[RMDB]
RNA sequence: GGGAACGACUCGAGUAGAGUCGAAAAGAGCCUCCCAGUUUUCGAGUAGUCCCGGACCUAUCUAAAUUGGAGUCAUCCGACCGUAUGGAGAAAAUUUCCGACAAGAGGUGAUCCACUGAGGGUUUGCGAGCCCCAAACUUCGGUUUGGGGAAAAGAAACAACAACAACAAC
Reactivity to DMS in 0.01 (KOAc 150mM, MgCl2 10mM, bicine 150mM(pH8.5), 24C), signal-to-noise 6, nucleotides 027 to 129: g040a050g000c120c030u040c010c040c030a040g020u020u010u040u010c060g000a000g000u030a060g030u030c030c010c030g040g020a120c050c030u040a100u040c080u020a070a140a070u040u050g050g000a000g040u070c070a000u050c030c010g020a150c190c060g030u000a000u070g000g000a060g020a070a050a120a100u040u000u010c000c000g010a070c080a050a070g030a170g000g000u040g000a120u010c000c040a030c150u000g010a110g020g020g030u000u010u030g030c080g060a130g030
Reactivity to 2A3 in 0.01 (KOAc 150mM, MgCl2 10mM, bicine 150mM(pH8.5), 24C), signal-to-noise 7, nucleotides 027 to 129: g050a010g070c010c020u010c020c000c010a030g030u080u050u030u080c030g010a020g010u050a010g030u040c010c010c000g020g000a020c040c010u070a180u160c040u110a070a110a110u120u100g050g000a050g100u080c020a020u040c010c010g030a050c010c010g060u040a140u210g050g030a030g100a010a120a040a080u110u090u010c020c010g030a030c020a030a020g090a070g020g020u020g000a020u000c010c010a020c020u040g030a060g000g040g060u020u030u070g060c050g030a050g010